[RMDB]
Record summary: Chemical mapping of a 177-nucleotide RNA with 2A3. The data come from the RNA Mapping Database (RMDB), library RFM100. Conditions: 150 mM KOAc, 10 mM MgCl2 and 150 mM bicine (pH 8.5), 24 C.

RNA sequence: GGGAACGACUCGAGUAGAGUCGAAAAUUAUCGUCCCACAUUUCGGAAAUUAUAUUCCGAGCCAGCAAGAAAAUCUUCUCUGUUACAAUUUGACAUAGCUAAAAACUGUACUAAUCAAAAUGAAAAAUUAUUUCUGGUUCUUCGGAACCAGAAAUAAAAAAGAAACAACAACAACAAC
Reactivity to 2A3 in 0.01 (KOAc 150mM, MgCl2 10mM, bicine 150mM(pH8.5), 24C), signal-to-noise 1, nucleotides 027 to 126: u160u100a080u110c000g000u050c000c060c000a000c010a000u060u090u060c020g030g110a030a030a030u300u250a130u240a070u300u000c000c000g000a000g000c000c000a000g080c000a000a200g020a160a200a120a120u060c080u140u260c210u230c020u150g050u040u000a130c000a280a230u000u000u040g040a040c030a040u150a030g020c000u170a070a000a090a090a000c000u010g020u040a150c070u280a070a000u020c020a090a000a000a180u040g010a110a000a090a060a060